[RMDB]
This 177-nucleotide RNA was probed chemically with DMS and 2A3. For 2A3 the reverse transcriptase was SuperScript II with manganese. Conditions: 150 mM KOAc, 10 mM MgCl2 and 150 mM bicine (pH 8.5), 24 C.

RNA sequence: GGGAACGACUCGAGUAGAGUCGAAAAGCGCUCGACCGCCUUCGCGGGCGUCGUGCCGAACGCGUUCCGGUAAUGGCGCACGAAGCUGCGCUCGCUCAUGUUGACGCGAGCGGCGAGCGUCGGCACAGCCAUUAAUUACCUUCGGGUAAUUAAUGGCAAAAGAAACAACAACAACAAC
Reactivity to DMS in 0.01 (KOAc 150mM, MgCl2 10mM, bicine 150mM(pH8.5), 24C), signal-to-noise 6, nucleotides 027 to 126: g010c010g020c010u000c020g000a170c070c050g010c080c030u010u010c150g010c260g000g000g020c000g020u000c060g010u000g010c030c010g010a030a050c060g020c130g000u010u000c030c010g010g000u000a080a110u010g000g000c020g020c010a140c040g010a060a050g010c070u010g010c050g010c000u000c000g000c020u010c020a120u010g020u010u010g000a070c150g020c010g010a020g010c010g000g010c000g000a060g010c010g000u000c030g000g010c090a090c160a200
Reactivity to 2A3 in 0.01 (KOAc 150mM, MgCl2 10mM, bicine 150mM(pH8.5), 24C), signal-to-noise 7, nucleotides 027 to 126: g000c010g000c000u030c010g230a300c060c050g030c050c010u070u070c040g010c070g070g090g010c010g020u040c020g020u010g000c010c010g040a080a020c070g030c050g210u180u080c040c010g000g000u180a240a130u100g020g000c000g000c020a010c040g060a050a030g020c070u100g050c020g000c020u010c010g010c000u030c030a160u250g160u300u230g090a030c080g010c010g010a010g000c000g010g000c010g010a000g000c000g020u040c000g060g000c070a050c030a070